[RMDB]
RNA sequence: GGGAACGACUCGAGUAGAGUCGAAAACAAAACCCACGCUGCACUGGGUGAUUCCGCAUUUACGAAAACUGUCUUCCGAUGUCGUGGCUGAGGAACUUCACUUUUCACCCACAACAAACUGCGACGUUUCAAGGAAUCCUAAAAGCAAGCUAGAAUAAGUAAAUUAUAAUUUCGAUUAUAAUUUACUAAAAGAAACAACAACAACAAC
Reactivity to DMS in 0.01 (KOAc 150mM, MgCl2 10mM, bicine 150mM(pH8.5), 24C), signal-to-noise 1, nucleotides 027 to 156: c020a080a070a130a140c000c000c000a070c130g010c020u000g000c030a060c100u000g000g000g060u010g000a100u000u020c000c020g010c060a170u000u000u000a140c080g000a070a060a100a090c000u000g020u020c050u000u010c060c020g000a230u000g020u000c000g040u010g040g020c020u000g030a060g000g020a040a140c090u000u000c150a120c100u000u000u000u000c020a100c080c010c020a060c040a070a180c060a020a110a100c060u000g020c050g010a070c020g020u000u030u010c080a110a150g000g000a060a060u000c020c060u000a040a080a110a110g000c060a060a100g020c030u000a070g010a130a140u000a080
Reactivity to 2A3 in 0.01 (KOAc 150mM, MgCl2 10mM, bicine 150mM(pH8.5), 24C), signal-to-noise 3, nucleotides 027 to 156: c020a000a120a010a090c000c010c010a010c050g020c040u030g000c010a060c070u040g020g070g020u120g060a030u020u000c030c000g020c120a140u100u130u190a090c080g030a030a040a020a020c070u110g010u060c030u170u020c060c030g080a090u030g000u000c010g000u020g010g020c020u020g020a040g020g030a010a060c040u210u180c060a090c120u020u070u060u010c010a040c010c000c050a010c000a010a010c010a000a200a020c070u080g040c030g000a000c000g010u000u010u020c050a070a040g010g000a000a000u060c000c010u090a090a110a040a020g050c060a100a010g060c000u140a030g260a180a130u300a220